[RMDB]
RNA sequence: GGGAACGACUCGAGUAGAGUCGAAAAACUUUGGCCGACGCUCCUAGGCGGGUGCGCACUGCUGUCUGGCCCGGCGCCGCGCUAGGGCGCACGUUUCGCUCUGCGGAGGGUAACCGGGCUGAAAUAAUGGACGAUCUAAAUUCGUUUAGAUCGUCCAAAAAGAAACAACAACAACAAC
Reactivity to DMS in 0.01 (KOAc 150mM, MgCl2 10mM, bicine 150mM(pH8.5), 24C), signal-to-noise 1, nucleotides 027 to 126: a070c060u010u000u030g010g010c000c070g020a150c080g010c030u000c000c050u000a080g000g000c120g020g010g000u010g000c050g000c090a070c000u000g000c040u000g000u000c080u010g000g000c000c010c020g000g030c270g030c000c010g000c010g010c020u000a010g000g000g000c000g030c110a050c230g000u000u010u010c000g000c000u000c030u000g000c060g000g000a110g010g000g010u000a060a110c010c020g000g010g010c010u030g000a020a050a070u010a120a140

Structure probing data (DMS) for a 177-nucleotide construct.
DMS adducts were read by reverse transcription with MarathonRT.